Chemical mapping of a 177-nucleotide RNA with DMS and 2A3. For 2A3 the reverse transcriptase was SuperScript II with manganese. DMS adducts were read by reverse transcription with MarathonRT. Conditions: 150 mM KOAc, 10 mM MgCl2 and 150 mM bicine (pH 8.5), 24 C.
[RMDB]
RNA sequence: GGGAACGACUCGAGUAGAGUCGAAAACCAGUGGCGAUGGAGCACCAACGGAGGGAGCACGUGGACCACUGGAGCUAAGACGGCCUCGACCAACCAGUACCACGACUUCGCAGCCAACACUUGGGCGAUCUGAAUGAGUCUUCGGACUCAUUCAGAUAAAAGAAACAACAACAACAAC
Reactivity to DMS in 0.01 (KOAc 150mM, MgCl2 10mM, bicine 150mM(pH8.5), 24C), signal-to-noise 3, nucleotides 027 to 126: c000c010a090g030u000g010g000c070g010a100u000g020g000a130g010c040a090c060c050a060a110c220g050g010a070g040g000g000a060g020c070a080c070g020u000g000g020a120c080c070a030c020u000g010g000a080g030c100u010a050a090g020a140c130g000g020c050c040u020c070g000a070c070c100a090a130c010c020a050g010u000a070c040c010a060c020g000a140c020u010u000c060g000c060a130g020c010c010a050a050c080a050c090u000u000g010g000g030c120g000
Reactivity to 2A3 in 0.01 (KOAc 150mM, MgCl2 10mM, bicine 150mM(pH8.5), 24C), signal-to-noise 3, nucleotides 027 to 126: c010c000a020g030u040g060g040c080g050a080u100g040g000a120g050c010a050c110c010a090a070c140g120g050a080g070g060g000a110g010c090a020c080g000u020g000g060a110c040c040a000c040u010g020g020a010g010c050u110a090a060g080a060c050g010g040c000c040u050c060g070a090c020c010a010a040c010c000a000g020u020a020c020c000a020c040g070a070c040u090u070c060g000c090a020g090c020c010a070a050c080a050c090u130u140g070g040g010c040g050